[RMDB]
RNA sequence: GGGAACGACUCGAGUAGAGUCGAAAAUCGCCUCCCAGGAGUUCUUCUCGGCUAACGCCAUCUCUGACCAGCUGCUGGGCGCAGGCUCUGACUUGAAGGACUUCACCCUCAAUGAGACUGUGAACAGUCAAAUCAAGCGGUUCGCCGCUUGAUUUGAAAAAGAAACAACAACAACAAC
Reactivity to DMS in 0.01 (KOAc 150mM, MgCl2 10mM, bicine 150mM(pH8.5), 24C), signal-to-noise 1, nucleotides 027 to 126: u000c090g020c010c020u010c020c010c030a130g000g010a040g000u000u010c060u000u000c010u000c070g000g000c030u000a090a180c140g000c000c010a120u000c070u020c060u000g030a130c070c040a040g010c080u010g000c030u000g010g000g000c110g000c030a090g010g000c030u000c050u000g000a120c150u000u010g010a050a040g040g000a060c150u010u020c110a180c070c000c020u020c030a040a110u020g000a070g030a010c020u000g000u000g000a040a060c110a030g000

The data come from the RNA Mapping Database (RMDB), library OK2TST. Chemical mapping of a 177-nucleotide RNA with DMS. The RNA was probed in 150 mM KOAc, 10 mM MgCl2 and 150 mM bicine (pH 8.5) at 24 C. Reactivities are given for positions 27 through 126. For DMS the reverse transcriptase was MarathonRT.